RNA sequence: GGGAACGACUCGAGUAGAGUCGAAAAAUCCCAUGUUUACUACUACUUGCUACCUCUAUAAUUUGAGAUUUCGAGUAUUUUUGCGAUGCAUGGAAAAUAAAAGACUAAAAUGGCCAGGUUUCUUUUCGAAUUAAUGUAGAUUCGUCUACAUUAAUUCAAAAGAAACAACAACAACAAC
Reactivity to 2A3 in 0.01 (KOAc 150mM, MgCl2 10mM, bicine 150mM(pH8.5), 24C), signal-to-noise 4, nucleotides 027 to 126: a000u000c000c000c000a000u020g040u010u090u080a040c010u010a020c000u010a000c010u020u010g030c010u040a100c040c000u050c020u060a160u120a300a300u190u120u160g060a050g000a020u030u050u050c030g010a010g000u040a060u030u160u030u080u060g090c110g020a030u040g000c000a000u020g020g090a040a040a050a000u220a030a130a050a040g090a030c040u070a090a000a050a050u000g100g030c040c040a020g120g010u000u010u010c000u010u040u010u050c070
The record gives the reactivity of an RNA of 177 nucleotides to 2A3. Conditions: 150 mM KOAc, 10 mM MgCl2 and 150 mM bicine (pH 8.5), 24 C. 2A3 is a SHAPE reagent: it acylates the 2'-hydroxyl of flexible nucleotides of all four kinds. Values are in units of 0.01, from 0 to 300, in steps of 10. The data come from the RNA Mapping Database (RMDB), libraries RFM100 and RFMREP.